[RMDB]
An RNA of 177 nucleotides, treated with 2A3 and DMS and read out base by base.
Conditions: 150 mM KOAc, 10 mM MgCl2 and 150 mM bicine (pH 8.5), 24 C.
2A3 adducts were read by reverse transcription with SuperScript II with manganese.
DMS (dimethyl sulfate) methylates the pairing face of unpaired adenines and cytosines.

RNA sequence: GGGAACGACUCGAGUAGAGUCGAAAAGAACGGCAUGGUGAACAUCGACAUGUACGGGAUUAUAACCGACAAGAUCAAGCUCUCGAGCUACAAGCUCAACGCCGUGGCCGAAGCCGUCCUGAAGGACGAGGAUGAUUCCAUUCGUGGAAUCAUCCUCAAAAGAAACAACAACAACAAC
Reactivity to 2A3 in 0.01 (KOAc 150mM, MgCl2 10mM, bicine 150mM(pH8.5), 24C), signal-to-noise 6, nucleotides 027 to 126: g060a060a020c020g000g000c010a020u030g020g010u050g100a080a030c020a170u140c060g010a020c020a030u100g040u160a230c010g000g000g000a030u110u140a080u190a130a010c000c000g010a030c030a030a050g020a110u090c050a090a020g060c020u010c040u100c150g000a000g000c010u120a130c070a160a000g010c020u020c040a030a030c040g020c010c000g010u020g060g020c000c000g020a030a000g070c020c020g020u030c010c000u070g170a140a050g050g010a010c050
Reactivity to DMS in 0.01 (KOAc 150mM, MgCl2 10mM, bicine 150mM(pH8.5), 24C), signal-to-noise 4, nucleotides 027 to 126: g000a080a110c030g030g000c010a170u000g000g000u000g010a140a100c280a070u010c070g000a030c180a080u010g020u000a060c000g020g000g000a130u030u060a080u040a110a240c000c010g000a070c030a060a050g000a130u020c080a070a130g010c110u030c190u040c140g000a060g000c010u040a090c250a090a140g020c000u000c040a160a160c030g020c010c010g000u000g000g030c000c010g000a090a130g010c050c040g000u000c000c000u000g000a150a130g000g010a000c100
For DMS the reverse transcriptase was MarathonRT.